[RMDB]
RNA sequence: GGGAACGACUCGAGUAGAGUCGAAAAGCGCAGCAUUACGAUGCUGCGCAACCACUAUGUGAUCUUAUUAAAAUAAGGUUAAAUUUCGAGGUUAAAAAUAGUUUUAAUAUUGCUAUAGUGUACCCUCGUGCAACGCGCAUGCUACGGCAUGCGCGAACUCCUAAUCAGUGUUCGCACUGAUUAGGAGAAAAGAAACAACAACAACAAC
Reactivity to 2A3 in 0.01 (KOAc 150mM, MgCl2 10mM, bicine 150mM(pH8.5), 24C), signal-to-noise 1, nucleotides 027 to 156: g000c000g010c010a000g000c000a010u010u020a060c120g070a000u000g000c000u000g030c000g000c000a000a000c000c000a040c030u180a170u220g090u040g020a040u000c000u020u020a070u030u180a220a170a220a130u030a050a020g010g000u020u010a080a170a160u140u190u050c000g000a000g060g000u050u140a000a000a100a030a160u060a040g010u060u020u150u110a170a170u140a150u300u140g000c000u000a000u070a120g130u070g020u070a050c020c000c000u000c000g010u030g050c070a130a000c000g000c000g020c010a020u000g000c000u060a020c120g120g000c030a000u000g000c000g030c000g000a000a000